[RMDB]
RNA sequence: GGGAACGACUCGAGUAGAGUCGAAAACUGCAUCUGUGAAGGACGAAGCAUAUUUCUGUUUCUGGAGGAUUAUUUAUAAUCUGCCGGAAAGUCUUGCAGGUGGCUGGGAUAUGUUCAGUCUGGUAGAAAAAUCAGGAGUCCUUCGGGACUCCUGAAACGUAACUAUGGAGUUCGCUCCAUAGUUACGAAAAGAAACAACAACAACAAC
Reactivity to 2A3 in 0.01 (KOAc 150mM, MgCl2 10mM, bicine 150mM(pH8.5), 24C), signal-to-noise 1, nucleotides 027 to 156: c000u050g050c010a050u010c010u020g040u000g080a260a230g030g000a020c000g010a030a020g000c010a000u010a000u030u080u030c040u130g120u030u030u000c000u010g000g030a060g030g010a050u000u010a050u030u270u000a080u000a050a000u030c000u030g060c000c000g000g010a030a010a000g000u010c020u020u000g000c000a010g000g030u010g040g000c080u020g000g000g000a020u000a000u030g010u010u010c000a000g010u000c010u080g000g110u140a120g190a090a160a030a020a030u050c000a000g010g010a000g010u010c020c000u060u140c180g020g020g010a010c010u000c000c000u000g000a000a000a000
Reactivity to DMS in 0.01 (KOAc 150mM, MgCl2 10mM, bicine 150mM(pH8.5), 24C), signal-to-noise 1, nucleotides 027 to 156: c040u000g000c000a030u000c050u000g010u000g030a110a150g000g020a010c030g020a130a080g020c050a080u000a050u000u000u000c000u010g000u000u000u000c000u000g030g030a020g010g020a010u000u000a050u010u000u000a100u000a100a010u000c000u010g000c000c000g040g020a020a090a020g000u010c000u020u000g010c020a070g030g030u000g000g020c000u010g000g000g010a050u000a050u000g000u010u000c030a300g020u020c020u000g000g020u000a120g010a050a140a080a200a220u000c000a020g000g000a060g000u000c000c000u000u010c300g030g040g020a010c010u000c000c020u000g010a010a010a090